[RMDB]
Annotation: An RNA of 177 nucleotides, treated with DMS and 2A3 and read out base by base. The data come from the RNA Mapping Database (RMDB), library OK1LIB. Conditions: 150 mM KOAc, 10 mM MgCl2 and 150 mM bicine (pH 8.5), 24 C. For DMS the reverse transcriptase was MarathonRT. 2A3 adducts were read by reverse transcription with SuperScript II with manganese.
RNA sequence: GGGAACGACUCGAGUAGAGUCGAAAAGACGGUCAGGCGGGCAGCGGCCUCGUCGUGCUCGCGACGCAUCGUCGCCUCGGCUUCGAAAAUGGCUUCGCGCUCGGCGCGCCUGCUCACCACAUCGUCGCAUUUAAUGAGGCUUCGGCCUCAUUAAAUGAAAAGAAACAACAACAACAAC
Reactivity to DMS in 0.01 (KOAc 150mM, MgCl2 10mM, bicine 150mM(pH8.5), 24C), signal-to-noise 6, nucleotides 027 to 126: g010a010c020g010g000u000c300a290g030g000c070g000g000g000c000a020g000c180g010g010c070c080u020c020g060u000c020g020u000g010c090u040c060g020c000g010a020c060g000c030a130u010c030g000u000c110g000c020c010u050c280g020g000c010u020u000c020g000a040a090a140a140u040g010g010c010u020u000c000g000c010g020c020u010c010g020g000c000g030c300g010c060c010u000g010c000u000c000a090c010c010a150c280a020u010c000g000u000c020g020
Reactivity to 2A3 in 0.01 (KOAc 150mM, MgCl2 10mM, bicine 150mM(pH8.5), 24C), signal-to-noise 8, nucleotides 027 to 126: g010a000c010g010g030u080c090a080g000g030c010g030g020g000c010a030g050c080g170g010c020c050u050c020g000u010c000g000u000g000c140u130c070g000c010g000a010c010g010c020a040u040c010g000u000c010g000c000c020u070c140g090g010c000u020u020c030g070a080a110a120a200u190g150g000c010u030u020c020g010c000g010c010u030c010g020g000c010g000c000g000c000c010u000g010c000u010c000a030c010c000a040c020a040u040c010g000u000c010g000